Structure probing data (DMS and 2A3) for a 177-nucleotide construct. It was measured as part of the RMDB library M2PK50.
RNA sequence: GGGAACGACUCGAGUAGAGUCGAAAAGCUCGGAGGUUCGCCUCCGAGCAAAUAAAAAUAGCUGGAAAACGAGCAAAACCAGCAAUAUACAUAACGCUCGAAAAACACAACAGUUCGCUGUUGUGAAUCAACAGUUUAUGUUCGCAUAAACUGUUGAAAAAGAAACAACAACAACAAC
Reactivity to DMS in 0.01 (KOAc 150mM, MgCl2 10mM, bicine 150mM(pH8.5), 24C), signal-to-noise 2, nucleotides 027 to 126: g020c000u000c000g020g000a000g000g020u000u010c210g010c000c000u000c010c020g030a020g010c000a000a030a030u010a020a050a080a100a090u010a230g000c030u010g000g010a060a110a140a090c000g050a020g020c020a160a140a110a060c010c020a010g000c010a100a080u000a100u000a130c130a040u010a050a070c160g030c010u000c010g000a120a080a080a220a130c000a010c000a010a000c000a000g030u020u010c190g010c010u000g000u000u010g030u000g000a020a100
Reactivity to 2A3 in 0.01 (KOAc 150mM, MgCl2 10mM, bicine 150mM(pH8.5), 24C), signal-to-noise 1, nucleotides 027 to 126: g020c000u020c010g010g000a000g040g040u060u190c240g030c030c000u000c000c000g000a000g000c010a000a000a000u000a010a000a000a000a000u060a020g020c000u000g000g000a030a050a080a170c000g000a000g000c000a000a070a000a090c000c000a010g020c010a010a070u200a030u030a070c060a070u170a100a020c060g000c010u000c000g020a030a020a000a020a000c020a010c000a000a020c000a010g020u060u100c140g050c060u010g000u000u000g000u010g040a000a090